[RMDB]
The data come from the RNA Mapping Database (RMDB), library TTRINS. Structure probing data (DMS) for a 177-nucleotide construct. The reactions ran in a buffer of 150 mM KOAc, 10 mM MgCl2 and 150 mM bicine (pH 8.5), at 24 C. Reactivities are given for positions 27 through 126.

RNA sequence: GGGAACGACUCGAGUAGAGUCGAAAAGAUAUGGAUCUUUAGGUCAUGCAGUCUCGUAGGGAGCUCAGUCUCGGAAACGAGACCAGAGCGAAGAACUACAGACUGCAUGACCUAAAGAUCCUAAGUCCUAUUAAGAUAACUUCGGUUAUCUUAAUAGAAAAGAAACAACAACAACAAC
Reactivity to DMS in 0.01 (KOAc 150mM, MgCl2 10mM, bicine 150mM(pH8.5), 24C), signal-to-noise 1, nucleotides 027 to 126: g000a070u010a300u010g000g010a000u000c010u020u020u000a000g000g000u000c000a020u000g000c000a030g020u000c000u010c260g030u000a020g000g000g000a150g020c000u000c010a290g010u000c000u000c000g010g000a120a140a180c000g000a000g000a020c000c060a100g030a000g000c000g010a090a090g010a140a140c010u020a000c000a010g000a010c000u000g000c010a000u000g000a000c000c010u020a000a010a020g000a000u000c000c010u010a000a060g000u000c020